RNA sequence: GGGAACGACUCGAGUAGAGUCGAAAAUUAUGUCGAAAAGGCUGGCCUCAUCGACAAGGCCUCGCGCAAGAUCAUUGCCGGAAACGCGCUGGUGAUUGCAGCGCAGAAAGACACGCCCAAGGGCGAAGUAAAUAGUAGGAUUCGUCCUACUAUUUACAAAAGAAACAACAACAACAAC
Reactivity to DMS in 0.01 (KOAc 150mM, MgCl2 10mM, bicine 150mM(pH8.5), 24C), signal-to-noise 9, nucleotides 027 to 126: u010u010a100u000g010u000c010g000a050a110a130a110g010g010c090u000g010g010c020c020u000c110a200u000c070g020a030c080a100a080g010g010c010c010u000c100g020c120g010c020a040a110g010a090u010c120a070u000u000g010c010c010g000g000a070a090a170c120g010c100g010c000u000g010g010u000g000a110u000u010g010c050a190g010c010g010c010a050g010a060a050a090g010a090c110a090c070g010c000c000c020a090a120g020g010g020c050g010a040a110
Reactivity to 2A3 in 0.01 (KOAc 150mM, MgCl2 10mM, bicine 150mM(pH8.5), 24C), signal-to-noise 8, nucleotides 027 to 126: u140u060a090u120g000u010c010g070a040a070a040a090g120g030c060u050g080g030c010c010u070c040a210u080c030g020a020c010a010a010g040g000c000c020u020c030g020c000g000c010a030a010g010a090u100c030a100u040u060g000c010c010g040g020a060a110a020c050g030c010g000c040u050g030g060u080g050a130u070u190g040c080a020g000c000g000c000a000g010a010a050a000g060a010c030a010c070g020c000c020c020a070a120g100g010g010c020g020a110a020